The record gives the reactivity of an RNA of 207 nucleotides to 2A3 and DMS.
The DMS profile rests on 3,758 reads.
For DMS the reverse transcriptase was MarathonRT.
[RMDB]
RNA sequence: GGGAACGACUCGAGUAGAGUCGAAAACGUGUCAGAGGUGCGCGGCCCAGACAAGUCUUGCAUUGUAAUGUCCAUGAAGUACGGUCCAAGAGACGCACUGGUUACAUUCACCGGGAUGGUGAAAUCGAGUGAAGGAUACGGGUAUGCGCCCUGUGGAUAAAAUUGACUGGUUCGCCAGUCAAUUUUAAAAAGAAACAACAACAACAAC
Reactivity to 2A3 in 0.01 (KOAc 150mM, MgCl2 10mM, bicine 150mM(pH8.5), 24C), signal-to-noise 3, nucleotides 027 to 156: c030g040u060g070u100c020a030g040a000g030g040u130g040c000g000c010g020g000c000c010c000a040g040a030c070a060a090g010u010c010u030u060g000c040a040u080u140g040u130a180a080u160g050u010c040c020a060u100g060a020a000g050u080a040c050g030g000u000c020c030a120a060g080a020g000a060c010g000c040a000c000u020g050g000u020u100a120c090a190u070u000c000a000c010c000g060g000g200a240u300g010g030u000g030a050a030a030u040c070g080a030g020u040g010a070a050g020g020a040u070a080c070g030g030g000u170a300u290g010c010g010c000c010c000u060g070u010g050g010a040
Reactivity to DMS in 0.01 (KOAc 150mM, MgCl2 10mM, bicine 150mM(pH8.5), 24C), signal-to-noise 2, nucleotides 027 to 156: c060g020u000g030u000c010a040g010a090g000g020u010g050c030g020c020g000g010c000c000c040a300g020a100c050a080a110g000u010c010u000u010g040c110a110u010u010g030u000a060a090u010g010u030c070c080a170u000g000a110a100g000u000a030c040g030g030u000c030c040a100a190g020a270g010a080c010g030c010a040c000u000g020g010u000u000a050c050a300u010u000c010a020c020c000g030g010g020a150u000g030g030u000g000a030a020a040u000c090g030a160g070u000g000a070a100g030g010a150u000a090c260g030g000g040u000a070u000g020c000g020c040c010c000u000g010u000g000g000a230